The record gives the reactivity of an RNA of 207 nucleotides to 2A3 and DMS. Values are in units of 0.01, from 0 to 300, in steps of 10.
RNA sequence: GGGAACGACUCGAGUAGAGUCGAAAACCGUAGGUAGCGAUAAGAUCCGAUGUACGUUGAAAUGGACUUCGAAAGAGGUCCAUGGAGUACACGGAUCUUUUGACGCUACCUAAACGGAAAAGUCAAGCUGUACGAGUUCGCUCGUACAGCUUGACAAGUUGACAGGUAAGUUCGCUUACCUGUCAACAAAAGAAACAACAACAACAAC
Reactivity to 2A3 in 0.01 (KOAc 150mM, MgCl2 10mM, bicine 150mM(pH8.5), 24C), signal-to-noise 2, nucleotides 027 to 156: c000c000g020u000a000g010g000u000a010g020c020g020a040u010a070a010g000a000u000c000c020g100a260u000g010u000a030c040g190u220u050g020a010a010a010u000g000g000a000c020u010u000c020g090a150a130a090g000a010g030g000u000c000c000a000u000g000g010a000g000u000a000c000a000c000g000g000a010u000c000u000u010u000u020g010a000c000g000c010u000a000c000c000u000a000a000a000c000g030g010a210a020a000a010g020u000c000a010a000g000c010u010g040u000a000c000g000a000g000u020u130c170g110c120u000c000g000u000a000c000a000g000c000u000u000g000a000c010a010a000
Reactivity to DMS in 0.01 (KOAc 150mM, MgCl2 10mM, bicine 150mM(pH8.5), 24C), signal-to-noise 1, nucleotides 027 to 156: c000c000g020u000a010g020g000u000a000g010c000g050a170u050a020a020g010a030u000c000c000g010a190u000g040u000a010c010g030u000u020g010a110a180a040u000g020g000a050c010u000u000c030g000a140a180a260g000a030g030g000u000c000c000a000u000g010g000a160g000u000a030c000a050c030g020g000a000u000c000u000u000u030u000g020a200c010g000c010u000a000c020c000u000a000a030a080c050g020g000a080a070a100a060g000u000c010a000a030g020c000u020g010u000a010c030g010a080g000u000u010c300g030c010u000c000g020u000a000c000a000g010c000u000u000g010a000c000a010a040

The RNA was probed in 150 mM KOAc, 10 mM MgCl2 and 150 mM bicine (pH 8.5) at 24 C. 2A3 adducts were read by reverse transcription with SuperScript II with manganese. It was measured as part of the RMDB library RNAMAK.